The data come from the RNA Mapping Database (RMDB), library RNAMAK. Structure probing data (2A3 and DMS) for a 207-nucleotide construct. DMS (dimethyl sulfate) methylates the pairing face of unpaired adenines and cytosines. For DMS, 3,886 sequencing reads were counted. 2A3 adducts were read by reverse transcription with SuperScript II with manganese. The 2A3 profile rests on 7,494 reads. The reactions ran in a buffer of 150 mM KOAc, 10 mM MgCl2 and 150 mM bicine (pH 8.5), at 24 C.
[RMDB]
RNA sequence: GGGAACGACUCGAGUAGAGUCGAAAACGCUGGGUGUGAAAGAAGACAGUUUGAGUUAGCAUCGUACUGAAGCGCGCACGGUACGAUGCUAACAAUGAUGACUGAGAACUUCUACGCACACCUGUGCUGAAGCGCGCACGGCAACCGAAAGGUGCGACCGUGCUAUAUGGUUCGCCAUAUAGCACGGAAAAGAAACAACAACAACAAC
Reactivity to 2A3 in 0.01 (KOAc 150mM, MgCl2 10mM, bicine 150mM(pH8.5), 24C), signal-to-noise 5, nucleotides 027 to 156: c060g020c040u110g010g020g000u000g000u000g010a080a120a100g010a010a010g030a060c000a000g000u020u030u050g060a020g000u020u000a000g000c010a000u000c000g000u000a000c000u020g040a200a060g000c000g010c010g010c010a020c010g010g010u000a000c000g000a000u000g010c000u000a000a000c000a000a010u030g010a000u010g020a000c000u000g020a030g080a200a060c000u010u000c000u020a050c190g030c000a000c000a010c000c000u010g040u060g000c040u110g040a100a040g000c000g000c000g020c010a010c010g110g040c060a130a160c010c010g040a080a020a010g010g000u040g000c010g030a040
Reactivity to DMS in 0.01 (KOAc 150mM, MgCl2 10mM, bicine 150mM(pH8.5), 24C), signal-to-noise 2, nucleotides 027 to 156: c060g030c040u000g050g000g050u000g030u000g000a020a050a020g000a030a050g040a160c000a010g020u000u000u010g000a070g010u000u000a010g000c000a030u000c000g000u000a010c000u000g000a040a100g010c000g040c000g000c000a300c050g000g010u000a010c000g010a020u010g020c010u000a000a000c000a120a200u010g000a090u000g030a060c010u000g000a210g000a130a140c030u000u000c030u000a100c180g000c000a030c010a000c030c020u010g000u010g020c040u000g020a120a080g020c020g000c000g040c000a050c030g000g000c050a070a220c030c040g000a070a180a150g020g040u010g030c030g000a140